[RMDB]
An RNA of 207 nucleotides, treated with DMS and read out base by base.
It was measured as part of the RMDB library RNAMAK.
RNA sequence: GGGAACGACUCGAGUAGAGUCGAAAAGGGGUCUCGCUUGUCAGAGGGAGUAUAGGCGACGAAGUGGCAUGUAUUAUAUGGCUGAAGCCUCCACGGCCAUAUAAUACAUGCCACAGAGCCUAGACUCCCUCUUGGAUUUAGCGAGACGGAGGCACCCGUAUACUACAAACUUCGGUUUGUAGUAUACAAAAGAAACAACAACAACAAC
Reactivity to DMS in 0.01 (KOAc 150mM, MgCl2 10mM, bicine 150mM(pH8.5), 24C), signal-to-noise 1, nucleotides 027 to 156: g020g010g020g000u000c000u010c000g040c020u000u000g020u000c000a150g030a060g010g030g000a050g020u000a050u000a000g010g030c000g030a190c170g000a080a180g010u000g010g000c000a010u000g020u000a010u000u000a010u000a010u000g020g000c010u000g000a030a060g010c020c000u010c000c030a300c060g000g000c000c000a010u000a010u010a020a020u000a000c010a000u000g000c000c000a000c020a000g000a080g030c020c000u000a010g000a010c000u000c000c000c000u000c000u000u010g010g010a080u000u000u000a050g050c000g020a010g010a010c020g000g010a020g030g040c010a070c030c030c080
For DMS the reverse transcriptase was MarathonRT.